[RMDB]
RNA sequence: GGGAACGACUCGAGUAGAGUCGAAAAGAUAUGGAGGUAGGGCGAUAAGAUGUCCUCGGAAACGAGGAAACAUCUUUUGACGCCUGUACUCCUAAGUCAAAUCCUUUACAGUUCGCUGUAAAGGAAAGGAGAAAGAUAUCUUCGGAUAUCUUUCUCCAAAAGAAACAACAACAACAAC
Reactivity to DMS in 0.01 (KOAc 150mM, MgCl2 10mM, bicine 150mM(pH8.5), 24C), signal-to-noise 4, nucleotides 027 to 126: g010a030u000a300u000g010g000a010g010g000u030a300g000g000g010c020g010a140u000a010a010g010a020u000g020u000c000c000u000c000g000g000a050a090a110c000g010a010g000g000a060a040a040c010a000u010c000u000u010u020u000g010a170c020g010c000c000u000g000u010a300c010u000c000c000u000a050a120g000u000c030a070a090a130u000c000c000u000u000u000a000c000a010g010u000u010c240g010c010u000g000u000a000a000a010g010g000a010a010a080